[RMDB]
RNA sequence: GGGAACGACUCGAGUAGAGUCGAAAAUACCCGCAUCGAGCUAGCAUGAGCAUGUUGGAAGCUAGCAACCUUCAUGCCGAUGCAAUCCCAGGCUAAUGCCAACGACUCUACUCGAGUCGACAUAGAAUCAUAUAUGUUACUUCGGUAACAUAUAUGAAAAAGAAACAACAACAACAAC
Reactivity to DMS in 0.01 (KOAc 150mM, MgCl2 10mM, bicine 150mM(pH8.5), 24C), signal-to-noise 2, nucleotides 027 to 126: u010a070c130c030c120g000c010a010u010c060g000a030g010c010u000a070g010c020a010u000g010a070g000c040a010u000g000u000u000g010g010a050a230g000c050u000a040g020c020a060a110c020c010u000u000c010a020u000g020c000c040g010a020u000g010c010a080a040u000c020c000c030a060g000g000c010u000a080a040u010g000c020c070a050a080c000g020a010c000u000c000u000a010c010u000c000g000a010g020u000c010g010a040c060a090u000a080g010a080a070
Reactivity to 2A3 in 0.01 (KOAc 150mM, MgCl2 10mM, bicine 150mM(pH8.5), 24C), signal-to-noise 3, nucleotides 027 to 126: u100a010c010c020c040g040c010a040u050c100g100a000g000c020u080a010g000c030a010u040g050a010g050c010a000u030g020u010u010g020g030a060a040g000c060u100a030g050c080a010a030c000c000u000u010c000a000u010g010c000c000g150a010u010g010c010a020a130u130c020c030c000a010g020g010c010u060a080a000u070g000c030c010a020a030c010g020a010c010u000c010u010a000c000u000c000g000a000g000u010c000g010a000c000a000u150a030g110a020a060